[RMDB]
RNA sequence: GGGAACGACUCGAGUAGAGUCGAAAAGCUGGAGGAUCGCUUGAGUCCAGGAGUUCUGGGCUGUAGUGCGCUAUGCCGAUCGGGUGUCCGCACUAAGUUCGGCAUCAAUAUGGUGACCUCCCGGGAGCGGGGGACCACCAGGUUGCCUAAGGAGGGGCCUACGGAAAAUGUUCGCAUUUUCCGUAGGAAAAGAAACAACAACAACAAC
Reactivity to 2A3 in 0.01 (KOAc 150mM, MgCl2 10mM, bicine 150mM(pH8.5), 24C), signal-to-noise 2, nucleotides 027 to 156: g050c080u030g020g000a010g020g040a080u060c040g050c080u030u020g060a030g010u000c000c020a010g060g020a150g080u240u150c030u010g020g010g000c020u010g070u080a040g000u040g020c040g000c080u050a000u050g030c010c030g110a180u120c090g070g000g040u020g000u030c040c030g030c000a000c020u050a030a190g040u080u000c070g020g000c010a000u000c020a010a120u070a070u220g000g010u020g010a120c000c000u050c040c020c030g030g030g050a120g230c050g000g010g000g010g010a040c150c000a000c000c000a020g020g040u000u070g020c000c000u040a060a040g030g030a010g010g020g000g000

The record gives the reactivity of an RNA of 207 nucleotides to 2A3.
Reactivities are given for positions 27 through 156.
Conditions: 150 mM KOAc, 10 mM MgCl2 and 150 mM bicine (pH 8.5), 24 C.